[RMDB]
Structure probing data (2A3 and DMS) for a 207-nucleotide construct. For DMS the reverse transcriptase was MarathonRT. The reactions ran in a buffer of 150 mM KOAc, 10 mM MgCl2 and 150 mM bicine (pH 8.5), at 24 C.
RNA sequence: GGGAACGACUCGAGUAGAGUCGAAAAACGUAGGUAUUCCUUUAUCCAAUAAUAGUUUAAAUACAUCUACAUUGGGAUUUGAUGUUGUCGCGUAUUUCUCUACGAUAUUAAUACCAUGUUUGAUGCUAUUUAUUUCUAGACCUUUCGAAAUUAAUAACAUGAAUUAGGUAUUCGUACCUAAUUCAUGAAAAGAAACAACAACAACAAC
Reactivity to 2A3 in 0.01 (KOAc 150mM, MgCl2 10mM, bicine 150mM(pH8.5), 24C), signal-to-noise 6, nucleotides 027 to 156: a000c080g040u060a050g040g030u040a070u020u090c000c000u040u110u100a170u070c060c030a050a030u140a150a050u040a070g010u050u030u010a000a010a000u010a000c000a000u000c010u010a010c000a040u140u240g030g030g020a080u050u010u030g000a010u010g000u030u020g010u020c050g000c020g060u110a270u120u300u110c030u000c010u010a000c010g010a000u010a010u030u010a000a010u000a030c000c000a000u000g040u060u150u120g050a000u010g010c060u010a000u000u000u010a030u020u040u020c000u010a040g040a110c010c000u080u180u150c100g040a080a090a050u260u300a100a080u300a110a040
Reactivity to DMS in 0.01 (KOAc 150mM, MgCl2 10mM, bicine 150mM(pH8.5), 24C), signal-to-noise 3, nucleotides 027 to 156: a080c090g000u000a060g020g040u000a120u000u010c020c030u000u000u000a110u020c050c030a050a090u000a140a150u000a070g020u000u000u000a020a040a030u000a040c020a010u000c000u000a030c000a040u000u020g040g020g010a150u010u000u010g030a080u010g020u000u000g010u000c050g000c050g020u000a110u000u000u000c090u000c010u000a040c030g010a030u000a030u000u000a040a050u000a040c010c000a060u000g000u000u000u010g020a060u000g020c100u000a030u000u000u000a030u020u000u000c020u010a070g010a060c050c030u000u000u000c070g010a090a070a110u000u000a050a060u000a080a230

It was measured as part of the RMDB library OK3TST.